An RNA of 307 nucleotides, treated with 2A3 and DMS and read out base by base. High 2A3 reactivity points to a flexible backbone, as in loops and unpaired stretches. The RNA was probed in 150 mM KOAc, 10 mM MgCl2 and 150 mM bicine (pH 8.5) at 24 C.
RNA sequence: GGGAACGACUCGAGUAGAGUCGAAAAGGAUUCCCGUCGAGAAAGAAUUAGCCAUUCACUCGUAGCGAGUCUUGGAGGGCAGGUGGUAACACUCUGCUUUUAAGCGUAGACAGCUAGGUAAUGGGCCGUAAGCCGUUAGGUUGAAGGGAUUGAGCUUCGAAAUUUCGCGUUAGUUGGGAAGGCCGAUGCACUCAGGAGUGUAGAAGGCAAUAUUGUUAUUCUCGUAAAUGGCGAGAGAAUAACAACUUCCUCGGAGUCGGUGACCAACCCAGUCGUUCGCGACUGGGAAAAGAAACAACAACAACAAC
Reactivity to 2A3 in 0.01 (KOAc 150mM, MgCl2 10mM, bicine 150mM(pH8.5), 24C), signal-to-noise 2, nucleotides 027 to 266: g000g020a030u060u000c000c040c000g000u000c020g010a100g050a050a130a000g020a040a080u050u000a060g010c000c000a000u020u000c030a060c040u030c040g050u020a000g020c010g020a070g020u010c020u070u070g040g000a030g040g010g000c010a000g000g080u050g020g040u060a040a000c040a010c000u300c020u070g020c030u030u030u000u030a090a030g080c040g010u040a020g000a030c000a010g000c000u000a040g030g060u030a100a150u220g030g030g000c020c030g020u070a050a020g000c020c000g040u030u140a040g000g060u030u100g040a050a060g000g000g000a020u080u190g080a080g040c050u020u060c050g060a040a100a160u110u150u090c010g010c010g140u170u200a140g060u250u080g020g020g010a010a050g020g010c010c000g000a010u030g010c000a010c010u040c050a120g120g090a060g180u020g000u050a090g010a260a030g000g000c020a000a050u150a020u100u000g000u000u000a000u010u020c000u000c000g000u010a110a030a100u100g040g010c030g020a070g000a000g010a060a000u010a000a000c000a000a000c010u000u040c000c000u000c000g030g000a010g000u000c010g040g070u090g170a000c110c010a010a070
Reactivity to DMS in 0.01 (KOAc 150mM, MgCl2 10mM, bicine 150mM(pH8.5), 24C), signal-to-noise 3, nucleotides 027 to 266: g020g010a300u020u000c020c010c000g010u020c020g000a050g000a070a040a090g000a090a040u010u000a170g010c020c030a300u010u000c050a080c060u000c010g020u010a040g010c050g010a080g000u000c020u000u000g010g010a040g010g000g030c020a000g000g050u010g010g000u020a150a130c040a050c010u030c010u000g000c010u000u000u000u000a080a140g000c120g000u000a040g020a030c020a280g000c020u010a030g020g010u000a080a050u000g000g000g000c020c050g010u030a130a140g010c140c020g000u000u000a040g000g000u010u000g000a070a200g010g000g000a110u010u010g000a120g010c070u000u000c050g000a050a110a090u000u010u010c030g000c110g000u010u000a100g010u020u000g000g000g000a020a020g010g000c020c000g000a190u000g000c010a030c000u000c150a150g000g010a060g010u000g000u000a020g000a090a190g010g010c010a040a090u020a080u000u000g000u000u000a010u000u000c000u000c000g010u010a070a090a090u010g010g010c020g000a090g010a010g010a010a010u000a000a010c000a010a050c050u000u000c010c010u000c070g000g000a040g000u000c010g010g000u010g000a220c020c030a110a210

It was measured as part of the RMDB library POS240. 2A3 adducts were read by reverse transcription with SuperScript II with manganese.